RNA sequence: GGGAACGACUCGAGUAGAGUCGAAAAGCGCGGAGUACGCUCCGCGACAACACUUCUUUCGACCCGCUAACCGAGACCUAUGGGUCGUUAAAUUACGUCUCUAUCUUACUCACAUAACAUCGCACAAAAAACGUGGUUCGGUUCGCCGAACCACGAAGAUCCUUUUGCAGUUCGCUGCAAAAGGAUCAAAAGAAACAACAACAACAAC
Reactivity to 2A3 in 0.01 (KOAc 150mM, MgCl2 10mM, bicine 150mM(pH8.5), 24C), signal-to-noise 2, nucleotides 027 to 156: g010c000g000c000g000g020a010g000u030a020c090g060c060u030c000c000g000c000g040a000c010a040a010c010a030c030u030u190c010u090u300u120c000g000a000c060c000c030g060c150u200a010a030c020c060g000a000g000a020c010c010u060a170u180g000g000g000u000c000g000u020u010a000a000a000u100u050a000c010g010u000c030u000c000u000a160u060c060u010u130a140c020u000c090a060c020a110u170a090a090c060a170u180c120g040c140a050c090a050a050a050a140a080a100c000g000u000g000g000u000u010c000g020g030u020u030c100g010c090c000g010a000a000c010c000a000c000g000a000a000
Conditions: 150 mM KOAc, 10 mM MgCl2 and 150 mM bicine (pH 8.5), 24 C. This 207-nucleotide RNA was probed chemically with 2A3. For 2A3, 797 sequencing reads were counted. Source: RMDB library M2RFPK, as collected in RNAgym.